[RMDB]
RNA sequence: GGGAACGACUCGAGUAGAGUCGAAAAGCAGUUUCGGCAAGGACCGGGAGAUGAUCGUGGAACUGCGUGACCCCGAUUUCACGACCGCCGUGCGCGCUGCCGAUACGAUCAAUGUCUUCGCCAAGCACACGCAUAUGCCUUUCGAGGCAUAUGCGUGAAAAGAAACAACAACAACAAC
Reactivity to 2A3 in 0.01 (KOAc 150mM, MgCl2 10mM, bicine 150mM(pH8.5), 24C), signal-to-noise 2, nucleotides 027 to 126: g070c060a020g000u010u050u060c050g000g000c030a040a180g070g010a080c030c040g000g070g000a140g030a110u120g010a040u030c000g020u010g010g020a000a060c020u070g000c040g070u060g050a140c030c010c000c020g090a000u040u140u170c070a070c040g040a060c040c010g020c020c000g040u100g050c050g000c040g000c060u030g050c060c020g000a010u020a070c020g000a040u010c040a070a070u170g030u030c000u020u050c050g020c000c000a040a000g000c010a020
Reactivity to DMS in 0.01 (KOAc 150mM, MgCl2 10mM, bicine 150mM(pH8.5), 24C), signal-to-noise 2, nucleotides 027 to 126: g030c040a100g030u000u000u000c050g010g000c000a140a140g000g020a120c050c060g020g010g000a140g000a170u000g010a050u000c020g050u000g000g000a080a010c020u010g000c090g040u000g030a160c100c000c040c050g000a110u000u000u010c060a030c040g000a110c000c000g010c050c060g020u000g000c050g020c080g010c050u000g010c050c050g000a140u000a020c040g020a080u010c050a060a150u010g010u000c010u000u000c020g010c030c000a110a190g020c170a180

This 177-nucleotide RNA was probed chemically with 2A3 and DMS. 2A3 adducts were read by reverse transcription with SuperScript II with manganese. For DMS the reverse transcriptase was MarathonRT. Source: RMDB library OK2TST, as collected in RNAgym. The reactions ran in a buffer of 150 mM KOAc, 10 mM MgCl2 and 150 mM bicine (pH 8.5), at 24 C. The DMS profile rests on 1,501 reads.